[RMDB]
RNA sequence: GGGAACGACUCGAGUAGAGUCGAAAAUAUCUCACGUUAGAUUCUUUGGUAAAUCACCAAUCAGCUCUAACGUCGGCCUCCGAGGUAUAGUGUCACUGGGUGUAAUUUUUACAGAUCGUCGUAGAGCGAUAGUAACUCCAUUCGUGGAGUUAUUGUCAAAAGAAACAACAACAACAAC
Reactivity to 2A3 in 0.01 (KOAc 150mM, MgCl2 10mM, bicine 150mM(pH8.5), 24C), signal-to-noise 9, nucleotides 027 to 126: u150a050u010c010u000c000a010c020g010u010u020a020g000a050u190u040c030u060u060u050g040g000u090a200a280a300u200c050a030c010c000a010a040u090c030a040g020c020u000c000u010a020a010c010g030u020c030g070g030c010c010u030c020c020g020a020g000g030u060a100u030a120g090u070g040u060c030a020c090u030g020g060g000u040g040u040a080a170u040u110u060u070u040a030c030a020g060a070u040c020g060u010c030g020u090a040g020a020g100c040
Reactivity to DMS in 0.01 (KOAc 150mM, MgCl2 10mM, bicine 150mM(pH8.5), 24C), signal-to-noise 9, nucleotides 027 to 126: u010a070u000c010u000c030a070c020g010u000u000a010g000a030u010u000c040u000u000u000g010g010u000a060a110a130u010c220a030c000c000a010a010u000c080a060g020c300u000c000u000a010a010c010g010u000c090g010g010c060c030u000c040c040g010a040g000g010u000a040u000a060g010u000g010u000c060a070c080u000g000g010g010u000g010u010a030a040u000u000u010u000u000a060c080a070g000a040u000c040g010u000c040g010u000a070g010a160g010c100
The record gives the reactivity of an RNA of 177 nucleotides to 2A3 and DMS. Conditions: 150 mM KOAc, 10 mM MgCl2 and 150 mM bicine (pH 8.5), 24 C. DMS adducts were read by reverse transcription with MarathonRT. Values cover nucleotides 27 to 126.